About this RNA
Source: RMDB library OK1LIB, as collected in RNAgym. An RNA of 177 nucleotides, treated with DMS and 2A3 and read out base by base.
[RMDB]
RNA sequence: GGGAACGACUCGAGUAGAGUCGAAAAUGUUUCACGCGUUGGUUUGUGUUAAUUUAGGUGGUUUGGCGCGGUAGGUUGGUUAGGUUAUGGCCUUGGGGGUCAUGGCUGUUAAAGAUCUAGAUUAACAGAAUAUUUAAUAUUUCGAUAUUAAAUAUUCAAAAGAAACAACAACAACAAC
Reactivity to DMS in 0.01 (KOAc 150mM, MgCl2 10mM, bicine 150mM(pH8.5), 24C), signal-to-noise 2, nucleotides 027 to 126: u030g020u010u000u000c010a130c100g020c120g000u010u000g000g000u010u030u000g020u010g010u000u010a050a080u030u010u010a060g000g010u000g000g000u030u010u020g020g000c060g010c020g000g000u010a040g020g010u010u000g010g000u010u030a100g000g010u010u010a030u010g010g000c020c000u020u010g040g030g020g000g000u010c000a000u000g000g020c020u000g010u000u010a070a080a100g010a050u000c020u020a050g000a130u010u020a020a030c020a110
Reactivity to 2A3 in 0.01 (KOAc 150mM, MgCl2 10mM, bicine 150mM(pH8.5), 24C), signal-to-noise 2, nucleotides 027 to 126: u120g020u000u040u020c110a070c100g100c060g040u000u050g020g050u010u020u040g040u000g000u000u020a030a060u080u050u190a100g000g010u020g110g000u060u090u060g040g040c120g010c050g040g050u070a080g010g070u120u070g000g000u020u100a020g040g000u080u040a020u090g000g000c010c000u020u070g230g010g030g000g000u000c000a000u030g010g000c000u040g030u080u080a110a020a000g030a030u000c020u040a050g000a030u130u070a040a010c000a010

Annotation:
The 2A3 profile rests on 1,069 reads. For DMS, 4,998 sequencing reads were counted. The RNA was probed in 150 mM KOAc, 10 mM MgCl2 and 150 mM bicine (pH 8.5) at 24 C.